[RMDB]
RNA sequence: GGGAACGACUCGAGUAGAGUCGAAAAGUAACAAUCUUCGGAUUGUUACAUAGCCUCCAGGUGGAAAGCAAAACCUUAGAAAGAAAAGAGAAAGAAAAAGAAGUGACUACCUGUUCGCAGGUAGUAAGAUUGCAAGUAUGUUCGCAUACUUGCAAUCAAAAGAAACAACAACAACAAC
Reactivity to 2A3 in 0.01 (KOAc 150mM, MgCl2 10mM, bicine 150mM(pH8.5), 24C), signal-to-noise 2, nucleotides 027 to 126: g000u000a000a000c000a000a000u000c000u030u040c110g030g000a000u000u000g000u010u010a000c000a010u010a010g050c010c020u050c000c000a030g000g070u100g020g110a160a090a040g040c060a050a050a080a060c020c010u110u120a050g070a160a110a010g080a010a080a040a020g040a030g040a020a080a010g080a020a080a030a000a000g120a110a030g050u060g090a010c000u000a010c010c000u020g030u000u040c230g000c060a000g010g000u000a000g000u000a000a000
Reactivity to DMS in 0.01 (KOAc 150mM, MgCl2 10mM, bicine 150mM(pH8.5), 24C), signal-to-noise 2, nucleotides 027 to 126: g010u000a020a020c000a010a010u000c000u000u030c170g020g010a010u010u000g000u000u010a000c000a090u010a090g020c040c010u010c060c060a100g000g030u000g020g000a080a130a100g010c080a070a050a070a070c040c030u000u000a060g000a090a060a080g000a030a040a030a070g000a070g030a030a040a090g010a040a020a040a080a050g010a060a080g030u000g000a070c000u000a010c010c000u000g010u010u010c230g010c000a000g010g010u000a000g010u000a030a050